Annotation
Structure probing data (2A3 and DMS) for a 177-nucleotide construct. The DMS profile rests on 1,711 reads. Source: RMDB library TTRDEL, as collected in RNAgym. The RNA was probed in 150 mM KOAc, 10 mM MgCl2 and 150 mM bicine (pH 8.5) at 24 C. For 2A3, 2,118 sequencing reads were counted. DMS adducts were read by reverse transcription with MarathonRT.
RNA sequence: GGGAACGACUCGAGUAGAGUCGAAAAGAUAUGGACAGUUUCUUUGAUCUACCGGGUCGGAAACGACCCGUAGGGAGAAACGUCCUAAGUCAAAAUCUAGCGUUUCACUUCGGUGAAACGCUAGAAAGAUAUAAUACGCCUUCGGGCGUAUUAUAUCAAAAGAAACAACAACAACAAC
Reactivity to 2A3 in 0.01 (KOAc 150mM, MgCl2 10mM, bicine 150mM(pH8.5), 24C), signal-to-noise 2, nucleotides 027 to 126: g000a010u070a020u110g000g030a050c180a230g030u020u020u030c020u230u260u170g100a130u060c020u030a050c100c220g010g030g000u000c030g000g040a010a030a020c010g000a000c000c000c020g000u020a000g020g100g000a020g000a000a000a010c020g010u000c000c000u020a110a020g070u020c010a010a010a010a300u020c000u010a000g000c010g000u000u000u030c010a000c000u040u030c240g050g000u000g000a000a010a000c000g000c000u000a000g010a000a010a010
Reactivity to DMS in 0.01 (KOAc 150mM, MgCl2 10mM, bicine 150mM(pH8.5), 24C), signal-to-noise 2, nucleotides 027 to 126: g010a030u000a230u020g010g000a000c020a140g020u000u000u000c000u000u010u000g000a060u000c010u000a000c130c140g010g000g040u010c000g010g010a060a050a200c000g010a020c010c000c000g010u000a000g000g020g000a020g000a000a020a010c000g010u000c000c000u000a020a090g010u000c010a090a120a110a140u000c000u010a000g010c010g000u000u000u010c000a000c000u000u020c170g010g000u000g010a000a010a010c000g010c000u000a000g000a010a060a090